[RMDB]
Source: RMDB library OK1LIB, as collected in RNAgym.
This 177-nucleotide RNA was probed chemically with DMS and 2A3.
The reactions ran in a buffer of 150 mM KOAc, 10 mM MgCl2 and 150 mM bicine (pH 8.5), at 24 C.

RNA sequence: GGGAACGACUCGAGUAGAGUCGAAAAAGCUCGGGACAAUGAUGGGACCGAUGUCCGGCUCGGUAUGGAUGUGAAAGCUAAACGCGAAGGAUUCGAAGCCGAUGAUGGGGAUAGUGAAAUUGUCCACUCAAAGCUAGUUCUUCGGAACUAGCUUUGAAAAAGAAACAACAACAACAAC
Reactivity to DMS in 0.01 (KOAc 150mM, MgCl2 10mM, bicine 150mM(pH8.5), 24C), signal-to-noise 4, nucleotides 027 to 126: a060g010c040u000c040g000g010g000a040c000a030a030u000g000a140u030g000g020g010a160c170c040g030a050u020g000u010c040c010g000g030c060u000c010g010g000u010a070u010g020g000a020u010g000u000g000a060a110a300g000c030u020a060a160a110c230g030c020g010a180a190g000g000a020u000u010c000g030a110a180g020c010c010g010a010u040g000a020u030g000g020g000g000a040u010a090g020u010g000a060a090a070u020u000g000u000c010c010a100c140
Reactivity to 2A3 in 0.01 (KOAc 150mM, MgCl2 10mM, bicine 150mM(pH8.5), 24C), signal-to-noise 4, nucleotides 027 to 126: a010g080c060u050c040g050g020g030a010c030a000a070u050g060a040u070g090g070g050a030c030c030g030a030u040g080u000c000c000g010g000c000u010c010g050g000u160a210u300g080g050a070u090g080u050g300a250a140a020g010c020u100a040a250a010c090g000c000g060a060a030g080g010a000u070u060c000g100a060a070g020c020c000g040a050u100g070a030u060g070g030g000g030a010u050a060g140u120g080a040a040a040u020u020g000u000c000c000a000c000
The DMS profile rests on 6,015 reads. The 2A3 profile rests on 2,099 reads.